[RMDB]
RNA sequence: GGGAACGACUCGAGUAGAGUCGAAAAGUCUGCCCUUGACAAGUGGUGUUGAAGGUUGGGUCUUGCGCAAUGGGAACCUGUGAACCAUGUCAGGUCCGGAAGGAAGCAGCAUUAAUCAGUGCUUCUCUUUAUCGGUUAUCUUCGGAUAACCGAUAAAAAAAGAAACAACAACAACAAC
Reactivity to 2A3 in 0.01 (KOAc 150mM, MgCl2 10mM, bicine 150mM(pH8.5), 24C), signal-to-noise 2, nucleotides 027 to 126: g040u030c010u070g070c000c000c000u030u040g020a020c040a030a120g040u050g050g030u040g010u010u110g030a030a020g140g020u000u030g120g000g010u000c000u010u050g070c080g020c040a030a240u090g070g020g000a000a060c000c010u040g020u100g070a010a010c030c000a000u110g040u080c010a010g080g010u030c060c080g060g080a070a020g000g000a080a000g000c020a000g010c010a020u020u060a070a100u080c010a010g000u010g080c070u000u020c000u020c000
Reactivity to DMS in 0.01 (KOAc 150mM, MgCl2 10mM, bicine 150mM(pH8.5), 24C), signal-to-noise 4, nucleotides 027 to 126: g000u010c020u010g020c040c010c010u000u020g010a050c070a100a090g030u010g000g030u000g000u000u010g000a050a040g010g000u000u010g000g020g000u000c030u020u000g020c130g010c140a110a100u050g000g000g020a020a030c040c020u000g010u020g010a110a100c100c130a030u000g000u000c020a270g020g000u010c030c020g000g070a110a080g000g000a020a040g000c030a120g020c030a040u000u010a110a100u020c090a050g010u010g010c070u000u000c000u000c060
The record gives the reactivity of an RNA of 177 nucleotides to 2A3 and DMS. The RNA was probed in 150 mM KOAc, 10 mM MgCl2 and 150 mM bicine (pH 8.5) at 24 C. The 2A3 profile rests on 1,024 reads. Source: RMDB libraries RFM100 and RFMREP, as collected in RNAgym.